[RMDB]
This 177-nucleotide RNA was probed chemically with 2A3.
RNA sequence: GGGAACGACUCGAGUAGAGUCGAAAAAAAGCAACACCAACCGGGGCCUGGGAGGGAGGGACUGCCAACCACCUGGAGGAGUCUGGGGUAGACUUGGUGAACAAAGUUCAGAGGCCAUCAGGUGGGACUUCCUGUGGGUGUUCGCACCCACAGGAAGAAAAGAAACAACAACAACAAC
Reactivity to 2A3 in 0.01 (KOAc 150mM, MgCl2 10mM, bicine 150mM(pH8.5), 24C), signal-to-noise 1, nucleotides 027 to 126: a010a020a000g160c090a030a060c000a000c040c000a080a080c010c000g010g000g130g020c000c070u120g030g020g060a120g130g040g050a200g020g050g070a020c000u040g090c090c000a070a080c000c000a000c000c000u010g000g020a000g010g010a010g140u000c000u000g150g010g000g000u130a070g020a040c020u000u000g170g020u120g100a090a050c060a040a060a000g000u100u150c000a060g000a000g190g070c050c000a030u000c000a000g000g000u000g000g060g000a000
About this RNA
It was measured as part of the RMDB library OK1LIB. As a SHAPE reagent, 2A3 marks flexible, mostly unpaired nucleotides at the ribose 2'-OH.